[RMDB]
RNA sequence: GGGAACGACUCGAGUAGAGUCGAAAACAGAUUAACUCUUUUAGUCUUUCUAUGCUUUCUGAGCAUUAAAGCCCAGCCAGCUCAGUCCCAGUAACAUUGCAUCAUUCAGAUCAACCCUGGACCGCCACGGUGUGAUAGUUUUCGAACUAUCACACCGAAAAGAAACAACAACAACAAC
Reactivity to 2A3 in 0.01 (KOAc 150mM, MgCl2 10mM, bicine 150mM(pH8.5), 24C), signal-to-noise 2, nucleotides 027 to 126: c020a020g070a050u090u080a000a040c060u120c070u180u180u030u110a030g000u000c000u000u080u020c050u110a070u060g010c030u000u150u080c110u270g030a000g000c030a040u060u170a120a040a000g000c000c010c010a030g020c010c000a020g010c010u000c000a010g000u040c020c010c010a010g040u080a060a040c050a100u060u080g000c000a030u010c010a000u130u090c020a010g020a050u050c000a010a040c000c010c040u020g000g060a040c040c050g090c020c050a040
Reactivity to DMS in 0.01 (KOAc 150mM, MgCl2 10mM, bicine 150mM(pH8.5), 24C), signal-to-noise 2, nucleotides 027 to 126: c100a080g020a050u000u000a050a080c300u020c090u000u030u000u000a030g000u000c020u000u000u000c060u000a050u000g000c000u000u000u000c170u000g000a030g000c020a040u010u000a080a110a120g010c020c020c020a060g000c090c040a110g010c010u020c080a060g030u000c010c000c020a080g000u000a040a060c090a060u010u000g000c050a050u000c060a060u000u000c080a050g020a030u000c060a050a130c050c060c020u010g040g000a030c060c070g010c050c070a100
This 177-nucleotide RNA was probed chemically with 2A3 and DMS. The RNA was probed in 150 mM KOAc, 10 mM MgCl2 and 150 mM bicine (pH 8.5) at 24 C. For DMS the reverse transcriptase was MarathonRT.